[RMDB]
RNA sequence: GGGAACGACUCGAGUAGAGUCGAAAAACGCACGGGUCAACGGCGGGAGUAACUAUGACUCUCUUAAGGUAGCCAAACGCCUCGUCAUCUAAUUAGUGACGCGCAUGAAUGGAGCAACGAGAUUCCCACUGUCCCUACCUGCUCCCCAGCGAACCCAGAUGUCUCCUAACUUCGGUUAGGAGACAUCAAAAGAAACAACAACAACAAC
Reactivity to 2A3 in 0.01 (KOAc 150mM, MgCl2 10mM, bicine 150mM(pH8.5), 24C), signal-to-noise 2, nucleotides 027 to 156: a010c050g020c050a040c040g010g000g000u070c100a200a000c020g040g030c040g010g130g010a020g000u050a030a120c130u130a210u260g080a050c000u020c000u010c000u160u170a030a060g040g040u090a110g060c050c000a070a080a030c110g020c010c010u110c020g020u000c010a000u020c040u080a200a150u160u160a140g010u000g040a000c030g000c010g000c020a030u130g070a190a030u090g020g030a100g050c010a000a030c050g010a000g020a040u000u070c040c000c000a030c050u020g120u080c010c000c000u030a100c040c000u000g040c000u060c060c000c010c000a000g010c000g060a090a090c000c000c000a020